The record gives the reactivity of an RNA of 177 nucleotides to 2A3 and DMS. DMS adducts were read by reverse transcription with MarathonRT. Values cover nucleotides 27 to 126. Conditions: 150 mM KOAc, 10 mM MgCl2 and 150 mM bicine (pH 8.5), 24 C. The 2A3 profile rests on 3,273 reads.

[RMDB]
RNA sequence: GGGAACGACUCGAGUAGAGUCGAAAAGAUAUGGAGAACGCUAGCGACACACUACCCACCUCGGAAACGAGAGGUGUGUUCGCUUGGACCGUUCUCCUAAGUCAAAACGCUUCGUUCGCGAAGCGAACAGCCCUAAAGGCUUCGGCCUUUAGGGCUGAAAAGAAACAACAACAACAAC
Reactivity to 2A3 in 0.01 (KOAc 150mM, MgCl2 10mM, bicine 150mM(pH8.5), 24C), signal-to-noise 2, nucleotides 027 to 126: g020a010u120a040u220g020g000a010g010a040a000c010g010c030u010a000g000c000g010a010c010a000c000a020c080u170a160c040c080c020a040c020c010u020c000g030g070a110a120a100c020g000a000g000a000g010g000u000g000u000g000u010u010c020g000c030u000u030g010g080a040c060c020g000u000u030c000u000c000c000u000a030a000g050u030c050a000a010a100a110c030g000c020u010u010c020g090u010u070c140g040c030g180a000a000g000c000g000a080a010
Reactivity to DMS in 0.01 (KOAc 150mM, MgCl2 10mM, bicine 150mM(pH8.5), 24C), signal-to-noise 2, nucleotides 027 to 126: g000a050u000a300u020g010g010a020g000a020a010c010g000c030u010a020g000c000g010a020c040a000c000a000c000u000a080c040c050c100a300c100c010u020c000g000g000a070a090a140c000g020a030g000a090g020g010u000g020u000g010u020u020c010g030c020u010u010g020g010a100c300c030g000u010u000c000u000c000c010u000a030a030g000u000c090a050a100a130a130c020g030c000u000u000c000g010u000u000c220g020c000g000a030a000g000c000g000a050a130